[RMDB]
The record gives the reactivity of an RNA of 207 nucleotides to 2A3 and DMS. Source: RMDB library OK3TST, as collected in RNAgym. For DMS, 4,768 sequencing reads were counted. The reactions ran in a buffer of 150 mM KOAc, 10 mM MgCl2 and 150 mM bicine (pH 8.5), at 24 C.
RNA sequence: GGGAACGACUCGAGUAGAGUCGAAAAAAGGGAGACUUCGCGUCCAUCUCUGAGGAAGGACGUAACUAUCUGCGUAACCUUCUGGAUGUUGCUAAGUCACCGAUGGCUGGACAGUUGGAAACUUUUGGAGGUAUCACCCCAAAGGGUAAAGGUAUUAGAGCUAAAUACUAUUCGUAGUAUUUAGCUCAAAAGAAACAACAACAACAAC
Reactivity to 2A3 in 0.01 (KOAc 150mM, MgCl2 10mM, bicine 150mM(pH8.5), 24C), signal-to-noise 4, nucleotides 027 to 156: a000a000g140g010g000a280g010a060c020u020u020c050g000c010g110u070c070c000a040u040c080u010c120u140g110a130g080g020a060a010g000g000a010c010g020u020a090a030c120u170a100u250c050u130g000c000g030u050a120a150c010c000u020u030c040u060g010g010a010u010g010u060u070g000c010u010a000a020g020u000c010a010c030c010g020a060u090g020g040c070u020g000g040a050c030a100g020u000u060g040g040a070a110a100c020u030u060u010u070g070g000a200g080g020u100a110u300c050a120c000c000c000c030a020a030a030g050g000g040u130a060a070a040g050g020u120a120u090u230a090
Reactivity to DMS in 0.01 (KOAc 150mM, MgCl2 10mM, bicine 150mM(pH8.5), 24C), signal-to-noise 2, nucleotides 027 to 156: a080a030g010g030g020a140g000a050c050u000u000c140g000c030g020u010c130c010a050u000c060u000c050u000g020a210g030g020a070a050g030g010a060c010g020u000a050a280c140u000a100u010c090u000g010c020g010u000a050a140c000c010u000u000c020u010g020g010a090u010g010u000u000g010c040u000a080a090g010u010c000a070c030c000g040a100u000g010g000c020u000g000g020a070c050a100g010u000u000g000g000a170a110a060c010u000u000u000u020g010g010a110g020g010u010a140u010c110a070c020c000c010c010a000a030a050g010g000g000u000a070a070a100g010g030u000a090u000u010a240